[RMDB]
RNA sequence: GGGAACGACUCGAGUAGAGUCGAAAAGAAGUGGCAGGGACAUGCCCCACAAGCUCGUUCUAGCAACAUAUGUUUGGCUAGUUCGAGCGAUUAGUCUAGAGGAGCGUCCUCUCGCCUAUUGACGAGACGUCGCCAUACUCUUCGGAGUAUGGCGACGAAAAGAAACAACAACAACAAC
Reactivity to 2A3 in 0.01 (KOAc 150mM, MgCl2 10mM, bicine 150mM(pH8.5), 24C), signal-to-noise 1, nucleotides 027 to 126: g160a040a000g030u000g010g000c000a000g140g000g000a010c000a080u300g000c070c000c010c000a050c000a050a000g000c000u040c040g000u000u000c010u000a000g050c020a030a090c000a010u230a120u230g090u180u000u040g180g050c000u000a000g030u000u000c000g000a000g000c030g000a000u000u080a010g050u040c140u050a120g060a100g040g000a000g000c000g130u040c000c020u010c000u000c010g030c000c000u140a220u020u210g080a030c030g000a030g010a130